Chemical mapping of a 207-nucleotide RNA with 2A3. The reactions ran in a buffer of 150 mM KOAc, 10 mM MgCl2 and 150 mM bicine (pH 8.5), at 24 C.
RNA sequence: GGGAACGACUCGAGUAGAGUCGAAAAUUAUCUUGCAUAACAAUCCAACAUGCCAUACUUUGUCGAAGGUCUGUUGCAUAUCGAAACUAACCAGUUUCCUGGUAUGUUAAGUUUAUAAUAUUUUACGCCAAUUUCCGCAAGCCGGUGGCUUCACAAACCCCACGACUAUGUUCGCAUAGUCGUGGGGAAAAGAAACAACAACAACAAC
Reactivity to 2A3 in 0.01 (KOAc 150mM, MgCl2 10mM, bicine 150mM(pH8.5), 24C), signal-to-noise 1, nucleotides 027 to 156: u160u060a040u190c010u000u110g010c060a060u070a300a000c030a070a100u050c070c000a000a000c040a030u100g100c000c000a070u100a080c100u250u070u260g070u180c090g010a220a000g020g030u030c010u030g070u090u000g000c000a010u010a070u080c030g000a050a010a010c010u000a160a040c100c110a000g000u030u000u030c030c180u160g060g010u120a010u030g000u000u060a040a000g010u080u070u070a100u120a280a000u000a170u070u110u110u070a060c010g000c000c010a160a140u000u170u210c000c030g010c030a050a050g130c160c000g000g090u030g020g070c000u180u240c030a180c140a180a200a160